Conditions: 150 mM KOAc, 10 mM MgCl2 and 150 mM bicine (pH 8.5), 24 C. Chemical mapping of a 177-nucleotide RNA with DMS and 2A3. Values cover nucleotides 27 to 126. For DMS, 3,182 sequencing reads were counted. For 2A3 the reverse transcriptase was SuperScript II with manganese. The 2A3 profile rests on 4,983 reads.
[RMDB]
RNA sequence: GGGAACGACUCGAGUAGAGUCGAAAAGAUAUGGACGCAUGAGAGGCAACAGCCACGUGUCGGAAACGACACCGUGGACAUGCCUCCAUGCGUCCUAAGUCAAAAGAGUGAAGGUUCGCCUUCACUCCCUGAUUGCUAGGUUCGCCUAGCAAUCAGGAAAAGAAACAACAACAACAAC
Reactivity to DMS in 0.01 (KOAc 150mM, MgCl2 10mM, bicine 150mM(pH8.5), 24C), signal-to-noise 3, nucleotides 027 to 126: g010a030u000a190u010g000g000a000c000g050c000a020u010g000a190g030a010g020g020c000a100a070c240a250g000c000c000a010c000g020u000g020u000c000g010g010a020a020a080c000g000a010c000a000c220c300g020u000g020g020a010c070a300u010g000c000c010u000c000c010a020u000g000c010g010u000c000c000u000a000a030g000u010c010a110a060a100a170g000a040g030u000g000a000a010g000g020u000u020c250g010c000c000u000u000c000a010c000u010c010
Reactivity to 2A3 in 0.01 (KOAc 150mM, MgCl2 10mM, bicine 150mM(pH8.5), 24C), signal-to-noise 3, nucleotides 027 to 126: g010a010u040a000u070g010g010a000c010g060c020a000u000g050a050g000a030g300g000c220a300a100c100a240g050c000c010a010c000g000u020g000u000c010g000g010a000a040a000c020g000a000c010a000c050c070g030u010g000g000a010c010a020u290g000c020c000u000c000c000a000u000g000c000g000u000c000c000u000a000a000g000u020c000a010a000a050a090g020a000g020u000g010a000a010g040g020u080u230c270g180c110c000u000u010c000a010c000u000c000